[RMDB]
RNA sequence: GGGAACGACUCGAGUAGAGUCGAAAAUACAAGAAAUGCUAAUUUCUGCUUGGUUAACCUCUCAUUGUCAACCAAAUACUUUGAGACUAAAUCUUUAGCUUGAGCUAUGUCCUCUUCCAUGGCGGAGCGAUUCCGAGACCUUCGGGUCUCGGAAUCGAAAAGAAACAACAACAACAAC
Reactivity to DMS in 0.01 (KOAc 150mM, MgCl2 10mM, bicine 150mM(pH8.5), 24C), signal-to-noise 1, nucleotides 027 to 126: u050a000c020a070a000g000a000a000a010u000g050c150u000a020a110u000u000u000c010u000g120c100u000u000g000g000u010u000a170a130c160c220u000c050u000c050a130u000u000g080u050c180a040a150c160c220a000a130a070u050a070c060u000u000u010g060a050g000a160c030u050a160a030a070u000c020u010u010u010a020g020c040u020u020g000a160g000c000u000a040u000g020u000c010c000u020c100u000u000c110c000a100u000g000g040c000g030g000a020g100
Reactivity to 2A3 in 0.01 (KOAc 150mM, MgCl2 10mM, bicine 150mM(pH8.5), 24C), signal-to-noise 2, nucleotides 027 to 126: u220a020c060a040a100g090a000a030a000u100g090c040u090a150a000u030u120u050c010u000g100c030u000u000g000g000u090u000a050a030c020c000u000c000u000c010a020u020u070g040u080c040a000a150c140c020a200a020a030u130a090c010u020u000u110g100a020g000a010c060u060a050a130a180u100c070u090u100u090a040g010c000u040u100g060a000g040c000u040a000u040g050u050c020c010u000c050u090u020c030c000a100u080g020g000c050g020g000a040g050